[RMDB]
RNA sequence: GGGAACGACUCGAGUAGAGUCGAAAAUAGCGAAGUAGGAUUUUAUGCGUCAAGUGUUCACAGGCUGGGGUGUCGCCGUGAAACGAAAAGCAGAAAGCGUGCUGCUUACGAUAUAAUUUCCGCACCCAUAAGAAGUCUCUGUUCGCAGAGACUUCAACUGUUAGGCAUGAUUCGUCAUGCCUAACAGAAAAGAAACAACAACAACAAC
Reactivity to DMS in 0.01 (KOAc 150mM, MgCl2 10mM, bicine 150mM(pH8.5), 24C), signal-to-noise 1, nucleotides 027 to 156: u020a090g030c050g010a130a080g060u000a070g050g020a060u000u000u000u000a050u000g000c010g030u000c070a020a210g010u000g000u010u010c020a050c050a080g000g020c010u000g020g000g000g000u000g020u000c030g010c030c030g090u000g000a020a010a060c050g000a300a020a050a040g010c010a020g010a060a110a140g030c250g000u010g030c050u010g010c000u000u000a050c010g080a120u000a030u000a040a060u000u000u000c000c020g000c110a120c000c020c000a150u020a060a110g010a020a030g010u000c000u000c000u000g000u000u010c280g050c020a070g000a000g000a000c000u000u010c000a050a120
Reactivity to 2A3 in 0.01 (KOAc 150mM, MgCl2 10mM, bicine 150mM(pH8.5), 24C), signal-to-noise 3, nucleotides 027 to 156: u230a020g060c070g080a100a010g040u100a030g030g010a000u030u020u000u010a010u030g010c010g010u030c090a060a020g010u010g030u060u020c020a020c090a130g000g000c010u050g010g000g000g020u000g030u070c060g010c000c000g010u000g000a020a010a000c010g010a000a020a040a010g010c030a000g060a110a220a020g200c160g110u180g050c030u000g000c000u010u020a000c000g000a010u000a000u000a020a010u010u000u020c010c000g000c000a000c000c010c030a030u110a080a050g010a000a000g000u000c000u000c000u000g030u040u080c210g020c060a010g000a010g000a000c000u000u000c000a000a010
Chemical mapping of a 207-nucleotide RNA with DMS and 2A3. DMS adducts were read by reverse transcription with MarathonRT. 2A3 adducts were read by reverse transcription with SuperScript II with manganese. The DMS profile rests on 2,688 reads. Values cover nucleotides 27 to 156.